[RMDB]
RNA sequence: GGGAACGACUCGAGUAGAGUCGAAAAAGCACGGUUUUUGAGGACGCAUUUUGUCCGUGCGGUAAUGCCCUUCUUUACACUUUCUCGCAUGGUGCGGGAGUGUGGAGAGGAAACAAAAGCUAGUCUCGAUAGGCGGUUAACUUCGGUUAACCGCCAAGAGAUAUGUCGACUUCGGUCGACAUAUCUCAAAAGAAACAACAACAACAAC
Reactivity to 2A3 in 0.01 (KOAc 150mM, MgCl2 10mM, bicine 150mM(pH8.5), 24C), signal-to-noise 3, nucleotides 027 to 156: a000g010c010a010c010g000g000u030u000u000u010u020g090a100g010g040a010c020g030c120a150u000u010u000u000g010u000c000c020g000u000g000c010g010g060u200a100a070u300g020c000c010c010u060u010c000u020u010u040a010c000a000c000u120u170u050c030u020c000g050c010a070u250g300g000u260g180c000g010g000g000a000g000u010g000u010g000g000a000g010a010g010g090a030a060a010c010a000a030a000a000g060c000u120a030g000u000c020u000c020g040a140u140a180g010g020c000g000g000u010u000a010a000c000u040u060c210g010g010u000u000a000a000c030c000g000c000c000a000a010

Chemical mapping of a 207-nucleotide RNA with 2A3.
The RNA was probed in 150 mM KOAc, 10 mM MgCl2 and 150 mM bicine (pH 8.5) at 24 C.
2A3 adducts were read by reverse transcription with SuperScript II with manganese.
It was measured as part of the RMDB library M2RFOK.